Description: The record gives the reactivity of an RNA of 207 nucleotides to 2A3 and DMS. For DMS the reverse transcriptase was MarathonRT. The RNA was probed in 150 mM KOAc, 10 mM MgCl2 and 150 mM bicine (pH 8.5) at 24 C. The 2A3 profile rests on 7,721 reads.

RNA sequence: GGGAACGACUCGAGUAGAGUCGAAAAGCGUACUACUCGAAGUCCCACUACCCACCCUUAUGAACUACAACGCUCCCAAAUAGGAGCGUUGCAUAAGGAGGUGGGUCACGAGUAUCGCAAACACAAUAAUUUCCACUUCGGUGGAAAUUAUUGUGAAGGUAAAUCUAUAGUUCGCUAUAGAUUUACCAAAAGAAACAACAACAACAAC
Reactivity to 2A3 in 0.01 (KOAc 150mM, MgCl2 10mM, bicine 150mM(pH8.5), 24C), signal-to-noise 6, nucleotides 027 to 156: g020c010g040u100a090c040u010a000c000u020c020g080a130a030g050u040c010c010c010a010c020u060a040c010c030c020a020c010c000c010u000u000a010u020g020a080a100c070u140a060c300a010a000c000g000c000u050c000c040c030a240a300a140u280a130g000g010a000g000c000g000u000u000g000c000a010u000a010a000g020g000a020g010g030u000g000g010g000u000c010a040c020g010a010g020u030a040u260c020g000c030a070a090a010c010a000c000a000a000u010a000a000u010u000u000c000c000a010c020u060u070c300g100g000u010g000g000a000a000a000u000u000a000u000u000g000u000g010a030a020
Reactivity to DMS in 0.01 (KOAc 150mM, MgCl2 10mM, bicine 150mM(pH8.5), 24C), signal-to-noise 1, nucleotides 027 to 156: g050c070g060u000a150c000u000a000c000u000c040g000a180a220g000u000c010c030c010a130c050u020a090c030c000c030a220c080c000c010u000u020a080u010g010a130a160c030u010a050c000a050a050c020g000c000u010c010c000c010a000a190a200u000a060g050g000a050g080c000g000u000u010g000c010a020u010a120a090g000g000a100g030g010u010g020g030g010u000c030a050c050g020a070g030u010a040u010c040g010c010a080a200a190c000a030c000a030a000u000a010a010u010u000u000c000c000a010c000u010u010c260g070g030u000g000g010a010a000a000u000u000a000u000u010g000u000g000a020a100